Overview
The record gives the reactivity of an RNA of 177 nucleotides to 2A3.
[RMDB]
RNA sequence: GGGAACGACUCGAGUAGAGUCGAAAACGCUCAGUGCGGUGCUACCGACCCGAGGUCAAGUCCCGGGGGAGGAGAAGAGAGGCUUCCCGCCUAGAGCAUUUGCAAGUCAGGAUUCUCUAAUCCCUCUGCCCCGUCUAAUCUUCGGAUUAGACGGGGCAAAAGAAACAACAACAACAAC
Reactivity to 2A3 in 0.01 (KOAc 150mM, MgCl2 10mM, bicine 150mM(pH8.5), 24C), signal-to-noise 1, nucleotides 027 to 126: c000g040c000u000c020a040g000u090g150c040g000g120u160g050c020u110a060c010c010g160a110c000c000c000g000a000g100g070u130c100a030a100g000u000c000c000c000g040g070g020g000g000a040g000g030a010g020a150a000g010a000g010a000g010g000c000u020u010c040c070c000g030c000c010u080a090g070a050g150c000a000u240u030u140g020c080a000a030g040u000c040a030g070g070a050u010u000c010u000c020u020a110a040u000c000c000c000u020c000u030
Source: RMDB library RFM100, as collected in RNAgym. The reactions ran in a buffer of 150 mM KOAc, 10 mM MgCl2 and 150 mM bicine (pH 8.5), at 24 C.